[RMDB]
RNA sequence: GGGAACGACUCGAGUAGAGUCGAAAAGGGUGGCGCCAAAGUUCUUCCUCACUAUGGCGUGGUGUAUCGCUUCUCUCGGCCCAGCGUACCUCAUCUCCAUGCGUAGGACGGAGAACACCACGGAGCCCUAAUUACUGAAAUUCGUUUCAGUAAUUAGAAAAGAAACAACAACAACAAC
Reactivity to DMS in 0.01 (KOAc 150mM, MgCl2 10mM, bicine 150mM(pH8.5), 24C), signal-to-noise 9, nucleotides 027 to 126: g010g010g020u000g010g010c040g010c020c020a060a100a080g010u000u000c040u000u000c010c030u000c150a170c040u000a050u000g020g030c050g040u000g000g010u000g010u010a070u010c060g010c050u000u000c060u000c040u010c080g010g010c100c060c040a120g000c020g010u010a050c060c090u000c120a080u010c050u000c020c020a070u000g020c030g010u000a050g000g000a090c240g000g000a030g000a030a040c010a050c050c060a090c130g000g010a120g010c030c030
Reactivity to 2A3 in 0.01 (KOAc 150mM, MgCl2 10mM, bicine 150mM(pH8.5), 24C), signal-to-noise 9, nucleotides 027 to 126: g070g010g020u030g010g010c060g030c050c010a070a050a020g010u020u010c010u100u070c010c010u050c020a150c050u050a050u100g300g000c010g000u010g000g010u030g010u030a090u180c050g000c060u050u030c030u020c020u050c090g060g000c020c010c020a010g000c010g020u030a050c000c040u120c040a120u050c030u000c020c010a030u050g010c010g020u030a030g010g020a010c030g010g000a010g000a010a010c010a020c010c010a030c070g040g020a020g000c000c000